Chemical mapping of a 177-nucleotide RNA with DMS and 2A3. The reactions ran in a buffer of 150 mM KOAc, 10 mM MgCl2 and 150 mM bicine (pH 8.5), at 24 C. The DMS profile rests on 1,724 reads. For DMS the reverse transcriptase was MarathonRT.
RNA sequence: GGGAACGACUCGAGUAGAGUCGAAAAGGAAUCUCUUCUGCUUGUGACGGUCUUGCUUCAGCUUAUAGGGCGAAUUCCUUUGAUGUACCUACAUUCUGCGCAAACCGUUCUGCAAUGUGUAAUUGGUCGAAUAUACUGGGUUCGCCCAGUAUAUUCGAAAAGAAACAACAACAACAAC
Reactivity to DMS in 0.01 (KOAc 150mM, MgCl2 10mM, bicine 150mM(pH8.5), 24C), signal-to-noise 3, nucleotides 027 to 126: g000g000a080a150u010c030u000c040u020u020c080u000g000c030u000u000g020u000g010a010c000g000g020u000c230u000u000g000c020u010u020c020a000g010c050u000u010a080u000a000g030g000g020c050g000a070a070u000u010c070c180u010u000u000g020a200u000g010u000a090c010c010u020a050c060a020u000u000c000u010g030c300g000c030a000a030a030c010c010g000u000u000c010u010g020c030a030a030u010g000u000g000u000a100a070u010u000g010g000u010
Reactivity to 2A3 in 0.01 (KOAc 150mM, MgCl2 10mM, bicine 150mM(pH8.5), 24C), signal-to-noise 3, nucleotides 027 to 126: g030g010a030a060u030c020u020c000u180u020c010u050g020c010u040u060g040u080g040a000c010g000g030u020c060u050u020g020c010u130u160c000a000g010c000u050u020a030u030a070g030g000g000c050g110a090a090u130u140c020c000u130u040u120g110a120u090g030u130a240c000c000u000a000c010a030u050u010c010u020g010c030g010c020a000a000a030c000c010g000u020u020c010u020g000c010a030a090u100g050u020g030u130a080a130u130u120g090g020u040